Structure probing data (DMS and 2A3) for a 177-nucleotide construct. DMS adducts were read by reverse transcription with MarathonRT. Reactivities are given for positions 27 through 126. The 2A3 profile rests on 3,196 reads. Source: RMDB library RFM100, as collected in RNAgym. The reactions ran in a buffer of 150 mM KOAc, 10 mM MgCl2 and 150 mM bicine (pH 8.5), at 24 C.

[RMDB]
RNA sequence: GGGAACGACUCGAGUAGAGUCGAAAAGAGAGCUAGGAACCGUAGGGGUGUUCUCAAAGGAAUCCUUUGCAGUGACGUCCUCGCAAGAGGACUAUAACAACAGAACUCGUAUUAGUAGCCUAAUACUCCCCAUUAAUGUCUUCGGACAUUAAUGGGGAAAAGAAACAACAACAACAAC
Reactivity to DMS in 0.01 (KOAc 150mM, MgCl2 10mM, bicine 150mM(pH8.5), 24C), signal-to-noise 1, nucleotides 027 to 126: g000a000g000a030g000c000u000a070g000g110a230a120c300c090g010u010a160g000g000g000g000u070g000u000u040c110u000c000a000a040a070g000g070a090a010u020c080c000u000u050u020g100c000a020g000u000g000a230c120g000u000c020c000u060c040g000c300a060a240g000a010g000g000a000c000u000a050u120a270a030c010a010a200c100a090g000a050a150c180u000c180g000u000a070u000u000a040g010u000a070g000c110c000u000a020a050u000a000c040u000
Reactivity to 2A3 in 0.01 (KOAc 150mM, MgCl2 10mM, bicine 150mM(pH8.5), 24C), signal-to-noise 3, nucleotides 027 to 126: g050a010g020a000g010c030u090a040g000g080a030a050c040c000g060u100a060g010g030g010g020u020g100u130u040c040u060c040a090a090a000g050g000a060a080u060c000c000u020u070u130g040c050a030g020u000g050a010c030g020u000c000c000u010c000g000c030a070a010g000a000g010g000a000c000u000a000u010a020a020c010a000a000c010a010g090a040a040c010u040c080g020u040a000u030u020a010g160u040a050g060c000c000u010a020a020u020a070c040u050